[RMDB]
RNA sequence: GGGAACGACUCGAGUAGAGUCGAAAAUUUUGCGGCUGUCUGACCAGGCAGUGCCGCGAAGCUACCAUCUGCCGGAUUAUGGCUGAACGCCUCUAAGUCAGAAUCCGUACCGGAACGCGGCGAUGUUUAACAUACCAGGAUUCGUCCUGGUAUGUUAAAAAGAAACAACAACAACAAC
Reactivity to DMS in 0.01 (KOAc 150mM, MgCl2 10mM, bicine 150mM(pH8.5), 24C), signal-to-noise 5, nucleotides 027 to 126: u000u000u000u000g000c000g010g000c000u000g020u000c000u000g010a170c270c210a090g010g010c000a020g010u030g000c010c000g010c000g000a020a030g010c080u010a170c060c010a100u020c050u010g020c130c010g000g010a040u000u000a040u000g010g000c000u010g010a140a080c100g010c020c030u010c050u010a210a060g000u010c000a020g010a030a030u000c010c010g010u000a070c170c040g020g010a100a120c120g000c040g000g000c030g000a130u010g010u000u000
Reactivity to 2A3 in 0.01 (KOAc 150mM, MgCl2 10mM, bicine 150mM(pH8.5), 24C), signal-to-noise 7, nucleotides 027 to 126: u040u030u010u040g010c000g000g010c000u020g010u070c020u040g140a190c070c060a040g010g000c010a010g020u050g190c010c000g000c000g000a010a010g010c010u040a050c000c000a060u040c060u150g040c030c000g000g020a010u020u030a040u090g010g000c000u020g030a090a030c060g030c060c010u030c020u040a010a040g010u000c000a010g030a010a010u000c000c010g030u050a110c030c010g050g060a120a050c050g020c040g070g000c030g060a070u100g110u040u020
About this RNA:
The record gives the reactivity of an RNA of 177 nucleotides to DMS and 2A3. The reactions ran in a buffer of 150 mM KOAc, 10 mM MgCl2 and 150 mM bicine (pH 8.5), at 24 C. Source: RMDB libraries RFM100 and RFMREP, as collected in RNAgym.